Structure probing data (DMS and 2A3) for a 177-nucleotide construct.
DMS adducts were read by reverse transcription with MarathonRT.
The DMS profile rests on 1,097 reads.
RNA sequence: GGGAACGACUCGAGUAGAGUCGAAAAUAGCGAUAGCGCCAGAUCCAGACGUGCAUUGAGGUAAUAUUCUUUCGGCGUCUUGCCGGUAUAGCGUAAAAACAGACGACGCAACCAGGCUUCGCUACAGGUUGCUCGUGUAGUUCGCUACACGAGCAACAAAAGAAACAACAACAACAAC
Reactivity to DMS in 0.01 (KOAc 150mM, MgCl2 10mM, bicine 150mM(pH8.5), 24C), signal-to-noise 2, nucleotides 027 to 126: u010a040g000c020g010a050u000a100g000c020g000c020c020a070g000a080u030c050c080a080g010a050c050g010u000g010c110a030u000u000g000a030g020g020u000a120a100u010a170u030u000c010u000u000u010c100g010g000c000g000u040c040u000u000g030c050c030g000g000u000a060u010a110g000c040g000u010a010a080a090a060a090c250a200g010a070c150g000a060c110g000c020a060a010c000c000a160g000g000c000u000u000c080g010c000u000a030c120a060g010
Reactivity to 2A3 in 0.01 (KOAc 150mM, MgCl2 10mM, bicine 150mM(pH8.5), 24C), signal-to-noise 2, nucleotides 027 to 126: u060a000g000c020g050a030u060a060g000c040g020c060c040a040g010a070u000c030c000a020g030a030c020g040u070g090c070a060u010u050g020a040g000g030u060a080a030u040a080u110u060c000u020u070u050c040g060g010c010g000u030c030u040u100g060c030c020g030g030u060a140u110a140g010c010g030u020a070a030a090a050a020c040a030g130a060c120g020a010c050g020c020a010a010c000c000a030g060g000c000u030u010c010g000c000u030a070c050a020g000

The RNA was probed in 150 mM KOAc, 10 mM MgCl2 and 150 mM bicine (pH 8.5) at 24 C.